Chemical mapping of a 177-nucleotide RNA with 2A3 and DMS. Conditions: 150 mM KOAc, 10 mM MgCl2 and 150 mM bicine (pH 8.5), 24 C. Source: RMDB library OK2TST, as collected in RNAgym.
RNA sequence: GGGAACGACUCGAGUAGAGUCGAAAAAAUGCUGGAAUGCUUAACACUAUCGCGUUGGGGCAGAUGCCUCCUUCCUGGCUGCAUCUUGCAAUAGCUGUGUGUCCACUUCAUCCCCAGGCAGCUGCACCUAUGGAUGUCCUUUCGAGGACAUCCAUAGAAAAGAAACAACAACAACAAC
Reactivity to 2A3 in 0.01 (KOAc 150mM, MgCl2 10mM, bicine 150mM(pH8.5), 24C), signal-to-noise 1, nucleotides 027 to 126: a000a000u160g010c050u070g030g040a100a030u140g000c050u140u070a060a010c020a030c080u090a070u170c030g010c000g080u060u070g020g010g010g000c030a010g030a180u080g010c000c000u010c010c000u120u090c020c040u040g040g030c010u010g000c000a030u030c000u030u100g050c050a010a180u050a130g040c050u000g010u010g000u020g010u030c000c010a080c000u080u130c050a170u000c000c010c030c000a020g030g000c020a030g010c020u080g000c020a050c050
Reactivity to DMS in 0.01 (KOAc 150mM, MgCl2 10mM, bicine 150mM(pH8.5), 24C), signal-to-noise 3, nucleotides 027 to 126: a050a040u000g010c070u000g020g000a120a060u010g010c060u000u010a080a060c090a080c060u000a050u000c090g020c070g000u010u000g000g020g000g000c100a080g000a080u000g000c010c020u010c020c040u000u000c070c060u010g000g010c100u000g010c040a040u010c030u000u010g020c050a080a070u000a060g010c040u010g000u010g010u000g000u000c020c020a040c030u010u000c100a090u000c000c000c010c060a110g000g000c020a050g000c020u000g010c030a080c170